[RMDB]
RNA sequence: GGGAACGACUCGAGUAGAGUCGAAAAGGGGAGAAAUGAUGGCCCUAGAGAAAAAUAAUACAGAUCAAGAAAUUGCCAUGUCAUAAGCAAAUGGCAAAUUCAGCCCUUAAACCCAGGACUUUUGAUUCUUGCUCUAGCUGCCUGUCCUCUGGGCUGACAUCAAGCUAGUUUUCGAACUAGCUUGAUGAAAAGAAACAACAACAACAAC
Reactivity to 2A3 in 0.01 (KOAc 150mM, MgCl2 10mM, bicine 150mM(pH8.5), 24C), signal-to-noise 3, nucleotides 027 to 156: g050g020g020g010a080g110a060a270a070u180g040a080u100g030g020c060c020c000u040a030g010a000g000a000a190a110a050a010u200a080a020u190a090c090a030g060a020u040c010a010a030g030a070a100a060u080u010g000c010c000a000u010g120u240c050a140u180a250a060g050c060a100a150a090u010g000g000c010a000a000a000u040u000c000a000g000c000c000c000u030u050a060a060a030c010c000c000a020g050g080a080c040u040u160u000u090g050a040u120u100c050u050u110g030c000u000c000u000a030g050c080u020g010c020c010u040g080u060c000c010u000c010u000g000g010g000c010u000g000a000
Reactivity to DMS in 0.01 (KOAc 150mM, MgCl2 10mM, bicine 150mM(pH8.5), 24C), signal-to-noise 2, nucleotides 027 to 156: g030g040g030g030a090g000a120a100a140u020g010a110u010g010g030c010c300c000u020a020g000a090g010a030a040a160a150a200u000a050a200u010a160c040a100g010a060u010c020a010a100g020a100a190a150u000u000g020c000c010a020u000g010u000c060a140u000a070a220g030c130a030a050a020u000g000g030c010a010a020a060u000u010c030a020g000c000c020c000u010u010a090a050a090c040c020c070a150g000g020a110c040u010u010u060u030g000a080u000u000c070u000u010g050c040u000c030u010a030g000c100u020g020c020c030u000g000u000c010c010u000c030u000g010g040g020c000u010g010a110
Structure probing data (2A3 and DMS) for a 207-nucleotide construct. Conditions: 150 mM KOAc, 10 mM MgCl2 and 150 mM bicine (pH 8.5), 24 C. Reactivities are rounded to 0.1 and cut off at 0 and 3. For 2A3, 1,427 sequencing reads were counted. DMS adducts were read by reverse transcription with MarathonRT.